Description
This 207-nucleotide RNA was probed chemically with 2A3 and DMS. The RNA was probed in 150 mM KOAc, 10 mM MgCl2 and 150 mM bicine (pH 8.5) at 24 C. It was measured as part of the RMDB library OK3TST. For DMS, 16,005 sequencing reads were counted. For 2A3 the reverse transcriptase was SuperScript II with manganese.
RNA sequence: GGGAACGACUCGAGUAGAGUCGAAAACUUUAUUGCAUUGUCUACAGUCUACGAGGUGAUUAGUAAUUAGUCUUGGCUGCAUCGUAAUCGUAAUAUCGAUCGCCUACUUGUUGACUCGGUUACCGGUGGCAGGCCUGACACUAUCAAGAAAUGUCAGAACUACUACUUGAUUCGUCAAGUAGUAGUUAAAAGAAACAACAACAACAAC
Reactivity to 2A3 in 0.01 (KOAc 150mM, MgCl2 10mM, bicine 150mM(pH8.5), 24C), signal-to-noise 9, nucleotides 027 to 156: c030u100u170u120a100u100u180g030c050a080u050u070g020u050c040u090a060c040a070g020u000c040u040a040c060g040a050g040g030u080g020a040u040u060a040g080u100a100a140u100u090a050g030u030c060u070u080g010g010c020u030g020c050a010u000c010g030u040a060a030u050c040g080u090a100a060u090a130u230c020g030a020u030c020g010c000c010u050a080c030u050u080g030u030u070g040a040c010u010c040g050g020u030u040a030c030c050g030g000u010g050g030c020a030g010g060c000c000u010g010a000c000a010c030u140a170u170c080a070a020g070a110a100a020u080g010u040c040a010g030
Reactivity to DMS in 0.01 (KOAc 150mM, MgCl2 10mM, bicine 150mM(pH8.5), 24C), signal-to-noise 4, nucleotides 027 to 156: c030u000u000u000a040u010u000g010c010a170u000u000g000u000c000u000a050c020a060g020u000c030u000a090c060g010a090g020g030u000g020a070u000u000a080g010u000a060a120u000u000a090g010u000c040u000u010g020g020c040u010g060c030a080u000c040g020u000a060a080u010c140g020u000a090a130u000a110u010c050g010a050u010c030g030c000c020u000a050c060u000u000g020u000u010g010a070c050u010c010g030g020u000u000a060c030c030g030g010u000g020g010c020a100g020g020c060c010u010g000a030c010a030c030u000a190u010c100a110a190g010a090a060a030u000g000u000c000a040g020